This 177-nucleotide RNA was probed chemically with DMS. Reactivities are given for positions 27 through 126. The reactions ran in a buffer of 150 mM KOAc, 10 mM MgCl2 and 150 mM bicine (pH 8.5), at 24 C.
RNA sequence: GGGAACGACUCGAGUAGAGUCGAAAAGAAAAUAAUAACGUCAGUUAUCGGAGUAAGCCCAGAAAGACGUAUGAACCUGGCAUUAUUCCACAUUACAAUCCCAGGUAUCUCCGGAAGUGUGUACGGCAGUCCGCUUGAAAUUCGUUUCAAGCGGACUAAAAGAAACAACAACAACAAC
Reactivity to DMS in 0.01 (KOAc 150mM, MgCl2 10mM, bicine 150mM(pH8.5), 24C), signal-to-noise 2, nucleotides 027 to 126: g000a090a020a000a040u000a050a160u000a110a040c000g040u000c090a040g000u040u020a020u000c050g000g010a050g000u000a000a090g000c000c030c070a120g000a050a040a120g050a040c010g000u000a030u110g000a040a080c070c000u000g000g000c150a010u000u000a080u000u000c070c120a120c110a100u010u000a040c210a010a000u000c230c000c010a030g000g000u000a050u000c010u000c010c000g010g030a090a130g000u000g020u000g000u000a010c080g000g030c210